Source: RMDB library OK2TST, as collected in RNAgym. An RNA of 177 nucleotides, treated with DMS and read out base by base.

RNA sequence: GGGAACGACUCGAGUAGAGUCGAAAAGGAAAUUGGCGAGGACGUAAAAUCCCCUGUUGCCGAUAUCCGUAACGUCACCGGUUCUCGUUCCGGCGGCAUGAUGGCAGCUGGCUGGUACCUCAGCCACCGUGUAGAUCCUGUUCGCAGGAUCUACACGAAAAGAAACAACAACAACAAC
Reactivity to DMS in 0.01 (KOAc 150mM, MgCl2 10mM, bicine 150mM(pH8.5), 24C), signal-to-noise 4, nucleotides 027 to 126: g020g000a020a100a050u010u010g010g030c020g020a020g000g020a080c080g000u000a120a080a130a200u010c080c040c010c010u000g010u000u000g030c010c010g000a050u000a040u000c060c100g000u010a110a090c140g000u000c040a050c030c010g010g010u000u000c120u000c120g020u010u000c020c020g010g020c030g020g000c030a070u000g000a110u010g010g010c080a060g000c130u000g000g010c060u010g010g010u000a160c060c070u010c010a050g020c010c020a080c140
The RNA was probed in 150 mM KOAc, 10 mM MgCl2 and 150 mM bicine (pH 8.5) at 24 C.
Reactivities are given for positions 27 through 126.